Annotation:
Chemical mapping of a 177-nucleotide RNA with DMS. Conditions: 150 mM KOAc, 10 mM MgCl2 and 150 mM bicine (pH 8.5), 24 C.
RNA sequence: GGGAACGACUCGAGUAGAGUCGAAAAACUUUGCCCGACGCUGCUAGGCGGGUGCGCACUGCUGUCUGGCCCGGCGCCGCGCUAGGGCGCACGUUUCGCUCUGCGGAGGGUAACCGGGCUGAAAUAAAUAGACCUCAUCUUUCGAGAUGAGGUCUAUAAAAGAAACAACAACAACAAC
Reactivity to DMS in 0.01 (KOAc 150mM, MgCl2 10mM, bicine 150mM(pH8.5), 24C), signal-to-noise 1, nucleotides 027 to 126: a200c060u000u000u010g000c010c010c000g000a090c060g020c020u000g020c150u000a090g050g030c040g030g000g000u000g020c040g000c080a070c050u000g000c010u010g000u000c030u000g020g000c000c010c070g020g020c210g030c020c020g000c020g000c030u010a020g000g000g000c000g020c080a020c170g030u000u000u010c010g030c000u000c050u000g010c020g000g000a070g060g030g000u000a070a160c010c000g010g000g000c010u000g000a010a070a070u010a010a100
For DMS, 908 sequencing reads were counted. DMS adducts were read by reverse transcription with MarathonRT.